This 207-nucleotide RNA was probed chemically with 2A3 and DMS. For DMS the reverse transcriptase was MarathonRT. Source: RMDB library M2RFPK, as collected in RNAgym. The 2A3 profile rests on 4,438 reads.
[RMDB]
RNA sequence: GGGAACGACUCGAGUAGAGUCGAAAAACGGUCGUACGCGACCGAGGCGCGGCUAGGUCGACGGACCGAACAAUGGCAUCCCGCGUUCUGCCAUCCGCCGCGCAGCUUCUUCUCAAACGGUGCGGAAAAAAGUAGGACACCUUCGGGUGUCCUACAAGCAUUUGUAUGAGUUCGCUCAUACAAAUGCAAAAGAAACAACAACAACAAC
Reactivity to 2A3 in 0.01 (KOAc 150mM, MgCl2 10mM, bicine 150mM(pH8.5), 24C), signal-to-noise 3, nucleotides 027 to 156: a000c030g000g000u010c000g030u060a050c240g010c000g150a000c000c010g000a060g010g020c010g000c000g000g000c000u000a010g000g000u010c030g110a160c210g140g030a000c000c000g000a010a000c000a000a020u000g000g000c000a020u120c040c000c000g000c000g010u150u070c020u010g000c000c000a000u010c010c040g010c000c000g010c000g010c000a000g000c000u110u040c000u070u010c020u010c020a060a060a040c080g080g020u060g030c030g020g000a060a040a020a000a000a080g010u010a000g000g010a000c000a010c010c000u020u060c210g020g000g010u000g000u000c000c000u000a000c000a000a000
Reactivity to DMS in 0.01 (KOAc 150mM, MgCl2 10mM, bicine 150mM(pH8.5), 24C), signal-to-noise 1, nucleotides 027 to 156: a150c000g030g010u000c010g040u000a110c230g040c100g000a010c000c010g000a040g000g020c000g030c030g010g040c010u010a110g000g010u000c010g020a180c260g070g000a030c010c000g010a090a100c200a110a010u000g000g010c040a130u000c000c010c020g010c030g020u010u020c140u010g040c000c000a060u000c010c050g040c000c000g000c030g010c030a010g020c040u000u000c070u000u000c090u010c070a060a070a110c010g040g000u000g000c000g020g020a010a080a050a100a090a160g040u000a010g030g000a060c010a010c010c010u000u000c180g040g060g010u020g000u000c000c010u000a000c010a000a120